Structure probing data (DMS and 2A3) for a 177-nucleotide construct.
It was measured as part of the RMDB library M2PK90.
Conditions: 150 mM KOAc, 10 mM MgCl2 and 150 mM bicine (pH 8.5), 24 C.
RNA sequence: GGGAACGACUCGAGUAGAGUCGAAAAGUAAAAGAGGAGAAAGCGCGCACUCCUCAAGCGCGCAGAUGUACGUACCACAUCAGGUACGAACGCGCCAAGGGUGGGAGGCGCGAACCGACCCAAAAAAACCUACAUACCGAUUCGUCGGUAUGUAGGUAAAAGAAACAACAACAACAAC
Reactivity to DMS in 0.01 (KOAc 150mM, MgCl2 10mM, bicine 150mM(pH8.5), 24C), signal-to-noise 2, nucleotides 027 to 126: g020u010a060a060a090a110g010a170g010g000a100g000a110a150a190g010c000g010c000g000c000a080c000u000c000c000u010c030a090a080g010c100g020c000g010c050a050g010a090u020g000u000a080c000g010u000a010c000c050a140c290a080u040c300a080g000g000u010a010c000g000a030a050c020g010c010g000c000c010a080a120g000g000g010u020g000g010g000a080g000g000c000g000c000g000a030a060c040c030g010a140c020c000c050a000a000a100a090a020a030
Reactivity to 2A3 in 0.01 (KOAc 150mM, MgCl2 10mM, bicine 150mM(pH8.5), 24C), signal-to-noise 2, nucleotides 027 to 126: g060u080a020a080a050a060g060a080g050g020a050g060a080a130a030g010c010g000c010g010c010a220c200u020c010c000u000c010a030a020g010c050g000c010g000c060a020g030a140u230g060u050a030c010g030u000a000c010c020a060c020a300u180c100a060g000g000u030a030c020g000a020a010c010g000c000g000c000c010a110a050g120g060g090u230g020g050g010a010g010g010c010g000c000g000a000a000c010c000g010a010c020c030c020a120a000a000a000a000a000